[RMDB]
RNA sequence: GGGAACGACUCGAGUAGAGUCGAAAAGAUAUGGAUCCGAACAGCUAGCUUCGUGGUCGGAAACGACCACAAGCUUGGACCUGUCGGAUCCUAAGUCAAAGGAUUUAAACGUUCGCGUUUAAAUCCAGUUGUAACCACAGUUCGCUGUGGUUACAACAAAAGAAACAACAACAACAAC
Reactivity to 2A3 in 0.01 (KOAc 150mM, MgCl2 10mM, bicine 150mM(pH8.5), 24C), signal-to-noise 2, nucleotides 027 to 126: g020a010u070a010u100g000g000a000u000c010c000g040a170a030c010a010g070c060u290a030g000c010u020u100c260g000u000g010g020u000c000g020g000a020a020a000c010g020a000c020c000a000c000a000a000g000c000u030u130g050g100a050c010c000u030g000u010c000g020g000a000u000c000c000u010a020a010g010u010c070a150a100a140g010g000a010u000u010u020a020a020a000c010g040u100u190c300g010c000g210u000u050u000a000a000a030u010c000c000a000
Reactivity to DMS in 0.01 (KOAc 150mM, MgCl2 10mM, bicine 150mM(pH8.5), 24C), signal-to-noise 2, nucleotides 027 to 126: g000a010u000a300u000g000g000a000u000c000c000g010a100a040c000a020g040c110u000a050g020c000u000u010c240g030u000g000g040u000c000g000g010a060a070a160c000g010a010c000c000a010c000a000a000g000c000u010u010g020g020a140c300c000u000g000u000c010g000g010a020u000c000c010u010a000a060g020u000c030a100a150a180g030g000a000u000u000u000a000a000a000c000g020u010u030c300g070c030g000u000u000u000a000a010a000u000c000c010a030
Chemical mapping of a 177-nucleotide RNA with 2A3 and DMS. It was measured as part of the RMDB library TTRDES. The reactions ran in a buffer of 150 mM KOAc, 10 mM MgCl2 and 150 mM bicine (pH 8.5), at 24 C. Reactivities are given for positions 27 through 126. DMS adducts were read by reverse transcription with MarathonRT. Values are in units of 0.01, from 0 to 300, in steps of 10.